Record summary
The record gives the reactivity of an RNA of 170 nucleotides to DMS and 2A3. For 2A3 the reverse transcriptase was SuperScript II with manganese. For DMS the reverse transcriptase was MarathonRT.
RNA sequence: GGGAACGACUCGAGUAGAGUCGAAAAACGUUGAUACGGAUUUACUCCGAGGAGACGAACUACCACGAACAGGGGAACCUCUACCCGUGGCGUCUCCGUUUGACGAGUAAGUCCUAAGUCAACAUGCUGAGCGCUUUGUUCGCAAAGCGCAAAAGAAACAACAACAACAAC
Reactivity to DMS in 0.01 (KOAc 150mM, MgCl2 10mM, bicine 150mM(pH8.5), 24C), signal-to-noise 4, nucleotides 027 to 129: a030c110g010u000u030g010a020u000a210c220g060g000a030u000u000u000a020c040u020c020c000g010a030g000g000a040g000a000c030g030a140a040c130u070a220c080c000a030c020g030a080a240c110a130g040g020g000g020a150a090c250c010u060c070u030a130c240c210c020g010u030g000g090c000g060u010c020u020c020c000g000u000u110u050g020a170c300g010a010g000u030a010a020g000u080c000c000u000a170a070g000u010c010a030a000c000a120u040g050c070u000g010a220
Reactivity to 2A3 in 0.01 (KOAc 150mM, MgCl2 10mM, bicine 150mM(pH8.5), 24C), signal-to-noise 4, nucleotides 027 to 129: a000c060g000u000u010g000a000u030a020c000g000g000a000u000u010u000a000c000u020c000c020g010a040g000g020a010g040a000c010g020a030a020c050u160a080c030c000a000c000g050a100a010c040a150g000g000g010g090a060a090c000c020u050c040u050a070c030c020c010g010u000g000g020c000g000u000c010u000c000c000g000u110u100u110g030a020c010g010a000g000u000a000a000g000u000c000c000u000a040a000g010u010c000a000a000c000a030u060g020c030u090g020a040
The reactions ran in a buffer of 150 mM KOAc, 10 mM MgCl2 and 150 mM bicine (pH 8.5), at 24 C.
It was measured as part of the RMDB library 15KLIB.
For 2A3, 10,657 sequencing reads were counted.